The record gives the reactivity of an RNA of 177 nucleotides to DMS and 2A3.
The data come from the RNA Mapping Database (RMDB), library VIROID.
The 2A3 profile rests on 992 reads.
The RNA was probed in 150 mM KOAc, 10 mM MgCl2 and 150 mM bicine (pH 8.5) at 24 C.
For DMS, 957 sequencing reads were counted.
RNA sequence: GGGAACGACUCGAGUAGAGUCGAAAAGCUCUCCCUUAGCCAUCCGAGUGGACGUGCGUCCUCCUUCGGAUGCCCAGGUCGGACCGCGAGGAGGUGGAGAUGCCAUGCCGACCCGAAGAGGAAAGAACACCGAUAAUUACUUCGGUAAUUAUCGGUGAAAAGAAACAACAACAACAAC
Reactivity to DMS in 0.01 (KOAc 150mM, MgCl2 10mM, bicine 150mM(pH8.5), 24C), signal-to-noise 1, nucleotides 027 to 126: g000c060u000c020u010c010c010c070u000u000a070g000c160c000a000u000c020c000g000a050g030u030g000g000a010c050g040u030g010c240g010u000c000c000u020c030c130u000u010c000g000g000a030u000g020c080c030c060a080g020g000u000c040g010g010a130c080c080g000c160g000a050g030g000a080g030g030u000g000g010a090g000a070u000g000c040c060a130u010g000c000c010g010a060c010c000c000g000a080a100g030a070g000g000a060a100a060g000a060a230
Reactivity to 2A3 in 0.01 (KOAc 150mM, MgCl2 10mM, bicine 150mM(pH8.5), 24C), signal-to-noise 1, nucleotides 027 to 126: g010c000u000c030u000c080c030c000u010u110a050g030c060c000a010u000c010c000g040a030g050u070g000g000a010c010g200u300g150c210g010u040c020c020u010c000c060u070u110c000g020g060a000u000g000c010c020c010a070g040g000u000c020g000g050a140c020c070g050c120g050a100g040g060a050g010g020u070g000g070a070g000a070u280g000c000c010a030u110g040c010c020g040a010c040c010c000g010a060a050g050a020g130g090a040a080a010g050a090a000